[RMDB]
RNA sequence: GGGAACGACUCGAGUAGAGUCGAAAACUGAGCUUGAUGUGUAAGGAAGGGAGGGGGCCUCAACAAUCCCUGAGGAGUAGUAGAAUAGCAGAUGGAACACUGAGAAGUGAUUUCCUUGAGGAUAGAUUUCCACGAUGGAAAGGAAAUGAGAGGUUUAUAAUACUAGUCGAUUCGUCGACUAGUAUUAAAAAGAAACAACAACAACAAC
Reactivity to DMS in 0.01 (KOAc 150mM, MgCl2 10mM, bicine 150mM(pH8.5), 24C), signal-to-noise 3, nucleotides 027 to 156: c080u000g000a090g020c090u000u000g020a120u000g030u000g030u000a070a090g020g010a200a100g020g040g030a140g010g040g030g060g000c040c040u000c030a040a070c100a110a120u000c010c010c030u010g020a070g030g010a090g030u000a060g010u000a060g020a050a080u000a080g010c020a070g010a100u000g010g030a040a080c040a060c050u020g010a170g000a130a030g020u000g000a110u000u000u020c010c010u000u000g000a110g020g020a080u010a100g010a160u010u010u000c020c000a110c100g010a110u000g010g010a050a050a030g010g000a020a020a070u010g010a110g010a080g020g010u000u000u010a090
Reactivity to 2A3 in 0.01 (KOAc 150mM, MgCl2 10mM, bicine 150mM(pH8.5), 24C), signal-to-noise 3, nucleotides 027 to 156: c040u040g010a000g010c020u100u080g040a040u070g040u030g030u100a030a030g010g060a010a080g020g020g000a050g030g000g000g020g010c000c000u000c010a040a110c020a010a060u070c040c000c000u040g000a030g010g000a030g000u050a010g010u030a010g060a080a040u040a060g040c010a010g030a070u080g020g030a030a000c020a000c050u020g030a020g000a160a010g020u010g070a110u020u010u010c010c000u030u090g060a020g030g010a020u040a080g040a040u100u020u010c020c030a090c090g080a090u140g010g090a080a040a070g010g030a030a030a020u060g010a080g020a010g100g010u120u140u100a070
Conditions: 150 mM KOAc, 10 mM MgCl2 and 150 mM bicine (pH 8.5), 24 C. Chemical mapping of a 207-nucleotide RNA with DMS and 2A3. Reactivities are given for positions 27 through 156. 2A3 adducts were read by reverse transcription with SuperScript II with manganese. For DMS the reverse transcriptase was MarathonRT. For 2A3, 1,733 sequencing reads were counted.